RNA sequence: GGGAACGACUCGAGUAGAGUCGAAAACGAUCACUAGAGUACCAUGCGUGGAUCGUCCAUGGCAGAGAGUGCGGUACUACUAGCAUGCCAUGGAGCGUGUAGAUCAUGGUCCAUGUCUGCGCUAGUACCGAAUAGUCUCGUUCGCGAGACUAUUCGGAAAAGAAACAACAACAACAAC
Reactivity to DMS in 0.01 (KOAc 150mM, MgCl2 10mM, bicine 150mM(pH8.5), 24C), signal-to-noise 3, nucleotides 027 to 126: c070g020a060u000c040a090c060u000a090g000a170g010u010a070c090c040a090u010g010c070g010u010g000g010a060u000c090g000u000c040c040a070u000g000g030c060a070g010a140g020a060g010u020g000c030g010g000u000a030c030u010a020c030u000a100g000c030a110u000g020c050c000a020u000g020g000a020g010c030g030u010g010u020a130g010a120u010c010a020u000g000g000u000c000c000a010u000g000u000c030u010g000c070g000c110u010a010g020u000a060
Reactivity to 2A3 in 0.01 (KOAc 150mM, MgCl2 10mM, bicine 150mM(pH8.5), 24C), signal-to-noise 3, nucleotides 027 to 126: c020g040a090u160c040a040c120u090a040g000a010g130u030a050c010c050a060u110g040c040g040u070g070g060a070u110c040g040u000c010c020a040u050g120g000c080a010g040a020g010a010g170u080g030c050g000g060u040a030c010u010a020c000u000a050g030c000a030u070g000c000c000a000u000g010g000a020g050c020g000u030g020u060a170g010a190u290c020a030u050g120g000u000c000c000a010u000g020u030c030u060g020c060g000c050u010a000g000u020a050

This 177-nucleotide RNA was probed chemically with DMS and 2A3. Reactivities are rounded to 0.1 and cut off at 0 and 3. The RNA was probed in 150 mM KOAc, 10 mM MgCl2 and 150 mM bicine (pH 8.5) at 24 C. The 2A3 profile rests on 4,077 reads.